Source: RMDB library M2PK90, as collected in RNAgym. Chemical mapping of a 177-nucleotide RNA with DMS and 2A3. The RNA was probed in 150 mM KOAc, 10 mM MgCl2 and 150 mM bicine (pH 8.5) at 24 C. For DMS the reverse transcriptase was MarathonRT. 2A3 adducts were read by reverse transcription with SuperScript II with manganese. As a SHAPE reagent, 2A3 marks flexible, mostly unpaired nucleotides at the ribose 2'-OH. The DMS profile rests on 2,474 reads.

[RMDB]
RNA sequence: GGGAACGACUCGAGUAGAGUCGAAAAGAAAAUCCCAAGCAUAGCAUAGCAUAGCAUAGCAUAGCAUAGCAUAGCAUAGCAUAGCAUAGCAUAGCAUAGCAUAGCAUAGCAUUGCAUACAAAAAAAAUAACAAGAUAUCGUUCGCGAUAUCUUGUUAAAAAGAAACAACAACAACAAC
Reactivity to DMS in 0.01 (KOAc 150mM, MgCl2 10mM, bicine 150mM(pH8.5), 24C), signal-to-noise 3, nucleotides 027 to 126: g010a060a110a130a130u000c010c000c000a120a140g000c030a050u020a120g010c030a050u000a070g020c030a060u000a100g010c010a030u000a090g000c020a060u010a050g000c030a030u000a040g000c030a040u000a080g000c030a070u000a110g000c060a080u010a050g000c010a030u000a070g000c020a040u000a060g010c030a050u000a070g020c040a030u000a070g000c010a030u000a110g010c050a160u010u010g010c060a050u010a080c130a020a000a000a020a040a060a100a140
Reactivity to 2A3 in 0.01 (KOAc 150mM, MgCl2 10mM, bicine 150mM(pH8.5), 24C), signal-to-noise 2, nucleotides 027 to 126: g040a010a070a010a030u010c020c010c000a020a010g010c000a030u150a020g000c010a020u090a040g000c010a040u000a030g010c010a020u020a030g010c000a030u060a020g000c010a030u060a030g000c020a070u050a040g000c010a040u040a010g010c020a060u070a020g010c010a040u060a020g010c010a020u050a040g000c030a030u040a020g010c010a040u050a040g000c020a030u050a050g000c010a020u000u050g000c010a030u080a120c180a040a080a030a020a010a010a010a030